[RMDB]
RNA sequence: GGGAACGACUCGAGUAGAGUCGAAAAAAGUGGAUGAUCCUAUGCUGUCGAGAAAAGCCUCUAGCGAGUUUCAUGGCGGCCCGUACCCUAAACCGACUCAGGUGGUCAGGUAGAGAAUACCGAGGCGAUGUACUCCCUUCUUCGGAAGGGAGUACAUAAAAGAAACAACAACAACAAC
Reactivity to DMS in 0.01 (KOAc 150mM, MgCl2 10mM, bicine 150mM(pH8.5), 24C), signal-to-noise 1, nucleotides 027 to 126: a020a050g000u000g020g010a090u000g010a020u010c020c060u000a030u000g050c030u000g000u000c070g010a130g000a050a140a130a170g000c060c030u000c010u000a110g030c000g030a100g000u010u000u000c050a100u010g020g050c020g030g020c040c020c010g040u010a060c080c020c050u000a070a060a040c080c030g010a060c070u020c050a110g030g010u000g010g010u020c080a040g030g000u010a060g010a190g020a080a130u010a030c020c010g000a100g010g030c090g010

This 177-nucleotide RNA was probed chemically with DMS. DMS adducts were read by reverse transcription with MarathonRT. Source: RMDB library OK2TRN, as collected in RNAgym. The DMS profile rests on 844 reads.